An RNA of 170 nucleotides, treated with DMS and 2A3 and read out base by base. For 2A3, 63,480 sequencing reads were counted. 2A3 adducts were read by reverse transcription with SuperScript II with manganese.
RNA sequence: GGGAACGACUCGAGUAGAGUCGAAAAUUUCUCCUUACGUUUGUAAUGCCCCUGGUUGUGGCGUUUCAGACGUUACUAAGCUAUAUUUAGGUGGUAUGAGCUACUUUUGUGUAGAUCAUAGACCUGUACAUCAUAUGGUUCGCCAUAUGAAAAAGAAACAACAACAACAAC
Reactivity to DMS in 0.01 (KOAc 150mM, MgCl2 10mM, bicine 150mM(pH8.5), 24C), signal-to-noise 9, nucleotides 027 to 129: u030u020u010c040u030c020c210u010u010a000c010g000u010u020u000g010u010a020a010u000g000c020c010c040c080u030g020g020u020u020g040u030g000g020c030g020u010u000u010c030a020g000a000c000g010u010u020a070c170u000a110a120g010c180u060a060u000a100u040u020u020a000g020g030u020g000g010u000a000u000g010a020g000c000u000a000c020u010u050u060u060g030u000g020u000a030g010a030u000c020a000u000a030g010a040c010c000u010g010u020a060c200a130
Reactivity to 2A3 in 0.01 (KOAc 150mM, MgCl2 10mM, bicine 150mM(pH8.5), 24C), signal-to-noise 9, nucleotides 027 to 129: u030u030u000c050u040c000c000u050u070a000c010g010u000u000u020g030u030a000a000u010g010c010c010c010c040u130g290g000u160u130g070u100g010g000c010g000u000u000u010c000a000g000a000c000g010u030u020a020c030u050a020a050g130c040u070a040u040a100u300u190u110a050g010g010u030g050g090u020a000u020g010a010g030c000u000a010c020u080u190u270u240g270u100g000u050a000g010a010u010c000a000u000a010g020a010c000c000u010g030u060a050c040a060